[RMDB]
RNA sequence: GGGAACGACUCGAGUAGAGUCGAAAACUGACCUGACCCCUCCCCCAGCGGGUCGCCCAGGAAUGGCGGGACCCCACUUCAGCAGGGUCCGCGUUCCAUCCUUUCUUACCUGAUGGCCGGCAUGGUCCCAGCUAUUUGUUCGCAAAUAGCAAAAGAAACAACAACAACAAC
Reactivity to DMS in 0.01 (KOAc 150mM, MgCl2 10mM, bicine 150mM(pH8.5), 24C), signal-to-noise 9, nucleotides 027 to 129: c090u040g040a090c040c030u030g010a190c030c030c030c000u030c030c020c020c010c040a120g030c080g000g010g010u010c000g030c020c010c030a100g010g010a080a050u040g000g150c000g040g040g010a010c000c010c010c030a090c140u070u070c130a150g060c130a110g000g000g020u020c000c000g040c000g000u000u010c020c000a120u050c050c030u040u000u030c000u000u030a130c050c010u020g030a120u050g020g020c000c040g000g000c070a070u040g000g020u040c020c010c020a090
Reactivity to 2A3 in 0.01 (KOAc 150mM, MgCl2 10mM, bicine 150mM(pH8.5), 24C), signal-to-noise 9, nucleotides 027 to 129: c020u050g080a060c000c010u040g200a210c000c000c000c030u060c010c000c000c000c000a010g020c030g010g010g010u010c010g020c010c010c010a020g030g080a060a050u100g300g190c070g010g020g030a040c000c010c010c010a090c040u280u230c090a090g040c030a050g030g010g000u010c010c000g050c010g020u050u020c010c000a040u040c020c000u060u140u040c030u060u070a110c010c010u050g040a070u070g070g000c010c000g020g020c030a050u100g020g010u010c010c000c000a000

This 170-nucleotide RNA was probed chemically with DMS and 2A3.
Conditions: 150 mM KOAc, 10 mM MgCl2 and 150 mM bicine (pH 8.5), 24 C.
For DMS the reverse transcriptase was MarathonRT.
Source: RMDB library 15KLIB, as collected in RNAgym.